[RMDB]
RNA sequence: GGGAACGACUCGAGUAGAGUCGAAAAAGAUAUGGAAAGUAGCUAGAGCGGAUAAACAGCGUUGAAACAGCGUCGGAAACGACGCUGUGGAGCUGUGUAACGCUCUUGGACCUACUUUCCUAAGUCACGAACACUUUAGGUUCGCCUAAAGUGUUCGAAAAGAAACAACAACAACAAC
Reactivity to 2A3 in 0.01 (KOAc 150mM, MgCl2 10mM, bicine 150mM(pH8.5), 24C), signal-to-noise 1, nucleotides 027 to 126: a000g050a020u100a030u120g000g000a000a000a000g010u010a010g020c030u020a010g010a010g020c040g030g000a030u040a010a010a000c010a000g010c030g300u300u040g040a010a010a000c000a010g000c000g000u000c000g030g030a080a110a030c010g000a000c000g020c000u010g010u000g000g030a000g000c000u000g000u000g010u010a020a000c010g000c000u000c000u010u020g000g060a010c010c000u030a020c000u000u000u000c000c010u000a100a020g040u000c030a030
Reactivity to DMS in 0.01 (KOAc 150mM, MgCl2 10mM, bicine 150mM(pH8.5), 24C), signal-to-noise 3, nucleotides 027 to 126: a120g010a050u010a300u000g000g000a010a010a030g010u000a010g000c020u000a010g000a030g010c000g010g030a210u000a090a130a010c000a000g000c010g040u000u020g000a240a160a010c010a020g000c010g000u010c000g000g010a100a070a210c010g010a030c000g020c000u000g000u000g000g000a040g000c000u000g000u000g010u010a090a240c020g000c000u000c000u000u010g020g000a070c300c010u000a000c010u010u000u000c000c000u000a010a100g010u000c040a220